[RMDB]
RNA sequence: GGGAACGACUCGAGUAGAGUCGAAAAGAUAUGGACCUACUCCCCACCAUCCCCUAGCGACGAAGUAUUAACAAUUCGGAAACGAAUUGUUAAUACAGAGCUAGGGCGAUGAGGUAGGUCCUAAGUCCAUCUAAACGGUGUUCGCACCGUUUAGAUGAAAAGAAACAACAACAACAAC
Reactivity to DMS in 0.01 (KOAc 150mM, MgCl2 10mM, bicine 150mM(pH8.5), 24C), signal-to-noise 3, nucleotides 027 to 126: g010a090u020a130u020g010g010a020c000c010u000a020c010u000c130c040c000c070a300c140c000a010u000c010c000c000c010u000a000g010c000g010a180c300g000a080a130g000u000a010u000u000a000a000c000a000a000u000u000c000g000g000a090a070a210c000g000a030a000u010u010g000u000u000a000a010u000a000c000a040g000a200g000c000u000a010g000g010g030c110g020a010u000g010a030g020g040u000a010g010g000u010c000c000u000a000a090g010u020c090
Reactivity to 2A3 in 0.01 (KOAc 150mM, MgCl2 10mM, bicine 150mM(pH8.5), 24C), signal-to-noise 1, nucleotides 027 to 126: g130a060u240a140u300g010g000a010c010c000u010a010c060u230c110c080c010c000a030c010c000a000u020c010c010c000c030u020a000g000c000g240a290c030g150a300a040g000u000a010u010u000a010a000c000a000a000u000u010c000g080g020a100a000a010c000g020a020a000u010u000g000u000u020a000a000u000a000c000a000g000a000g010c000u010a000g020g000g000c070g000a000u020g000a010g030g000u000a020g010g010u010c000c000u000a000a000g000u090c000
An RNA of 177 nucleotides, treated with DMS and 2A3 and read out base by base. It was measured as part of the RMDB library TTRINS. DMS adducts were read by reverse transcription with MarathonRT.